An RNA of 177 nucleotides, treated with 2A3 and read out base by base. The data come from the RNA Mapping Database (RMDB), library OK1LIB.

RNA sequence: GGGAACGACUCGAGUAGAGUCGAAAAACCAAGUCUGUUGUCAAGUUCCAAGGUGGCGCAAUCCCGGAAAGACCGCAGCACUUGCCAGGGCGGUACCGGCACCACUGAAGAUAUUAAUCACACUUCAAGCCAUACGUACUUUCGAGUACGUAUGGCUAAAAGAAACAACAACAACAAC
Reactivity to 2A3 in 0.01 (KOAc 150mM, MgCl2 10mM, bicine 150mM(pH8.5), 24C), signal-to-noise 1, nucleotides 027 to 126: a000c060c000a140a050g060u120c220u060g180u080u000g000u130c000a050a050g000u000u000c000c080a110a090g000g000u000g000g000c000g100c140a000a300u150c080c000c000g000g000a090a050a000g090a000c030c030g000c020a000g110c000a050c080u080u150g070c140c020a000g000g000g000c050g090g000u120a230c050c000g000g000c000a000c110c000a000c000u000g000a030a030g080a000u010a170u140u300a300a230u200c060a060c000a000c110u050u090c000a000